[RMDB]
RNA sequence: GGGAACGACUCGAGUAGAGUCGAAAAGAAGAUCUUCAUUAUUUAAUCAUUCACCUUUUGGGUUCCUAAGAGGAUUCAUUUGACCAUAAAUUUAAACACAGCAUGAGACACUCAUCCUUUGGGGUUUGGUUCUCAAAUACUUUAAAGAAUCAUAUAGCGUUCCAUUGAUGUUCGCAUCAAUGGAACGAAAAGAAACAACAACAACAAC
Reactivity to 2A3 in 0.01 (KOAc 150mM, MgCl2 10mM, bicine 150mM(pH8.5), 24C), signal-to-noise 1, nucleotides 027 to 156: g040a000a020g080a000u050c130u200u070c190a080u020u300a080u300u200u210a070a160u170c100a150u110u140c020a100c080c000u140u150u040u100g060g030g030u000u080c020c000u040a030a090g020a150g000g010a000u030u070c000a000u150u010u080g050a060c020c000a100u140a100a170a080u140u120u300a080a090a000c080a040c000a150g170c040a110u040g020a000g000a000c020a000c170u040c000a070u150c020c020u080u100u080g000g000g000g100u070u070u000g000g040u000u000c000u000c000a020a020a020u040a000c110u030u140u190a040a130a040g100a050a030u080c090a040u180a040u040a260g110

Structure probing data (2A3) for a 207-nucleotide construct. The 2A3 profile rests on 250 reads. The RNA was probed in 150 mM KOAc, 10 mM MgCl2 and 150 mM bicine (pH 8.5) at 24 C.